[RMDB]
RNA sequence: GGGAACGACUCGAGUAGAGUCGAAAAGAUAUGGAAUCGGCCAGAUUAGCUGCAGGUCGGAAACGACCUGGCAGCGACGAUCUGGCGAUUCCUAAGUCAAACUCGUACCGGUUCGCCGGUACGAGAACGUAUGAUUCAUCUUCGGAUGAAUCAUACGAAAAGAAACAACAACAACAAC
Reactivity to DMS in 0.01 (KOAc 150mM, MgCl2 10mM, bicine 150mM(pH8.5), 24C), signal-to-noise 4, nucleotides 027 to 126: g000a030u000a300u010g000g000a010a000u000c000g020g030c000c000a000g000a020u000u010a240g020c000u010g020c000a030g000g010u000c000g040g000a050a060a150c010g000a000c000c000u000g000g020c000a000g010c000g010a070c300g010a050u000c000u000g010g010c000g010a010u010u000c000c000u000a010a050g000u000c030a140a140a200c000u000c000g010u000a000c020c000g000g010u010u000c300g040c000c000g010g010u000a000c000g000a000g010a020a080
Reactivity to 2A3 in 0.01 (KOAc 150mM, MgCl2 10mM, bicine 150mM(pH8.5), 24C), signal-to-noise 4, nucleotides 027 to 126: g000a000u040a030u090g000g010a020a000u030c050g300g150c110c000a010g010a030u210u240a060g000c000u000g000c010a000g000g010u000c000g030g000a040a030a000c000g000a000c000c020u020g120g070c020a000g020c010g000a010c040g090a040u020c010u000g000g000c010g000a010u000u000c000c010u000a000a000g000u010c030a050a040a190c000u000c010g000u000a010c010c000g000g110u050u110c300g040c120c000g000g000u000a000c000g000a000g000a000a000